Notes
Chemical mapping of a 177-nucleotide RNA with DMS and 2A3. The data come from the RNA Mapping Database (RMDB), libraries RFM100 and RFMREP. The 2A3 profile rests on 3,640 reads. For 2A3 the reverse transcriptase was SuperScript II with manganese. For DMS the reverse transcriptase was MarathonRT.
RNA sequence: GGGAACGACUCGAGUAGAGUCGAAAACGGAAGGGAUAACCGCUGAAAGCAUCUAAGCGGGAAGCCUGUUCCAAGAUGAGGUUUCUCACCCCCUCGAGGGGGUAAGGCCCCCGGCAGACCACCGGGUGGAGUACGUAGUUUUCGAACUACGUACUCCAAAAGAAACAACAACAACAAC
Reactivity to DMS in 0.01 (KOAc 150mM, MgCl2 10mM, bicine 150mM(pH8.5), 24C), signal-to-noise 3, nucleotides 027 to 126: c130g010g030a070a300g000g010g010a030u000a130a260c010c000g040c000u000g000a090a160a160g000c240a030u020c080u010a260a030g020c000g000g000g000a070a110g020c000c000u000g000u030u000c000c010a050a110g020a160u040g010a110g030g010u000u020u010c020u040c090a040c010c000c000c000c000u030c260g000a110g000g030g000g000g000u000a020a010g040g000c030c010c000c000c020g010g000c050a140g030a090c100c050a300c000c010g000g000g010u000
Reactivity to 2A3 in 0.01 (KOAc 150mM, MgCl2 10mM, bicine 150mM(pH8.5), 24C), signal-to-noise 3, nucleotides 027 to 126: c070g000g000a010a000g020g000g000a000u030a030a050c010c000g000c000u000g070a100a100a060g130c050a060u060c070u130a030a030g010c000g020g000g000a030a000g030c000c000u110g300u040u000c000c000a020a000g100a040u210g020a070g010g030u020u150u000c020u000c010a060c000c010c000c030c000u110c130g080a300g000g000g010g000g020u010a000a010g020g010c000c000c000c000c020g000g030c040a050g060a100c000c000a000c000c000g000g000g010u030
The RNA was probed in 150 mM KOAc, 10 mM MgCl2 and 150 mM bicine (pH 8.5) at 24 C.